[RMDB]
RNA sequence: GGGAACGACUCGAGUAGAGUCGAAAAGAUAUGGAUACGUAGACUUACCUUCAGCGGACAUCGAUCAUAGGGUUCGGAAACGAACCUAUGGGAGUCCAGCUGAAGGUAAGUCUACGUAUCCUAAGUCCACAUUAGAUAAGUUCGCUUAUCUAAUGUGAAAAGAAACAACAACAACAAC
Reactivity to DMS in 0.01 (KOAc 150mM, MgCl2 10mM, bicine 150mM(pH8.5), 24C), signal-to-noise 6, nucleotides 027 to 126: g010a100u010a300u010g010g000a010u000a010c000g020u000a000g000a020c000u000u000a000c000c000u000u000c000a010g020c000g000g000a020c000a290u010c190g000a120u010c010a010u000a020g010g020g010u010u010c000g000g000a090a090a240c000g010a020a040c000c000u000a000u000g000g000g010a040g010u000c010c000a080g060c010u000g010a010a000g000g010u000a000a000g000u010c000u000a000c000g010u000a000u000c000c000u000a010a080g000u000c040
The record gives the reactivity of an RNA of 177 nucleotides to DMS.
The RNA was probed in 150 mM KOAc, 10 mM MgCl2 and 150 mM bicine (pH 8.5) at 24 C.
Reactivities are given for positions 27 through 126.